[RMDB]
RNA sequence: GGGAACGACUCGAGUAGAGUCGAAAAUUCUGGGAUGCAGGAGUUGUAGAGCCUGUUUAUGGACCUAACUUGUCCAAUCAAGACAAGAUACUGUUAGCCAUUUCAGUAUGUGAAUACUCUGUUGACCGCUUCCGGUAUCAUUCGUGAUACCGGAAGCAAAAGAAACAACAACAACAAC
Reactivity to 2A3 in 0.01 (KOAc 150mM, MgCl2 10mM, bicine 150mM(pH8.5), 24C), signal-to-noise 1, nucleotides 027 to 126: u050u000c010u040g000g000g040a010u030g040c020a070g030g150a040g130u060u030g080u170a080g030a000g100c020c000u020g020u000u050u030a020u030g030g040a050c010c030u010a010a050c010u020u060g000u030c070c000a030a140u230c130a150a030g050a010c040a050a000g020a110u040a080c040u050g040u160u040a050g060c000c080a070u010u050u010c000a040g040u040a080u130g100u080g090a040a040u040a090c000u020c030u020g010u050u070g040a050c010c060
Reactivity to DMS in 0.01 (KOAc 150mM, MgCl2 10mM, bicine 150mM(pH8.5), 24C), signal-to-noise 1, nucleotides 027 to 126: u000u000c040u000g000g010g010a130u000g000c000a040g030g000a090g010u010u000g010u010a120g010a170g000c110c010u000g070u010u010u010a070u020g030g000a100c070c060u010a020a090c050u000u000g020u010c000c060a100a120u020c290a050a130g010a000c020a010a000g000a090u010a020c230u000g000u000u000a040g020c090c080a030u000u000u000c050a000g020u000a110u010g000u010g000a150a060u010a030c010u000c020u000g010u000u000g000a290c120c060